[RMDB]
RNA sequence: GGGAACGACUCGAGUAGAGUCGAAAAGAUAUGGAUUCCUGACGAAGCGAGUUGGUGAAUGGAGCUAGUGCUUCGGAAACGAAGCCUAGCGAUGAAAUUCACCAACUCGUCGAAGGAAUCCUAAGUCGUAGUAAGGAAUCUUCGGAUUCCUUACUACAAAAGAAACAACAACAACAAC
Reactivity to 2A3 in 0.01 (KOAc 150mM, MgCl2 10mM, bicine 150mM(pH8.5), 24C), signal-to-noise 2, nucleotides 027 to 126: g060a060u230a100u230g000g000a000u000u040c000c000u090g180a300c090g070a150a010g250c030g010a010g020u000u000g000g020u010g010a020a010u020g010g020a000g010c000u000a010g030u120g300c000u000u010c020g020g000a080a050a020c010g000a000a000g010c000c000u000a000g000c010g000a000u000g000a000a000a000u000u000c000a000c000c000a000a000c000u000c010g010u000c000g000a010a000g000g000a000a000u010c010c000u020a100a030g030u060c110
Reactivity to DMS in 0.01 (KOAc 150mM, MgCl2 10mM, bicine 150mM(pH8.5), 24C), signal-to-noise 4, nucleotides 027 to 126: g000a130u000a300u010g000g000a010u000u000c000c000u010g000a300c300g000a140a210g020c010g010a010g010u000u000g000g000u010g000a010a010u000g000g000a050g010c000u000a010g010u020g020c000u000u000c000g000g000a110a110a240c010g010a020a010g010c000c000u000a000g000c000g000a050u010g010a090a140a000u000u000c010a000c010c000a000a000c000u000c000g020u000c030g000a270a010g010g000a020a010u000c000c000u000a000a070g010u010c090
The record gives the reactivity of an RNA of 177 nucleotides to 2A3 and DMS. For 2A3, 6,593 sequencing reads were counted. The DMS profile rests on 5,641 reads. Values cover nucleotides 27 to 126. Source: RMDB library TTRINS, as collected in RNAgym. The reactions ran in a buffer of 150 mM KOAc, 10 mM MgCl2 and 150 mM bicine (pH 8.5), at 24 C.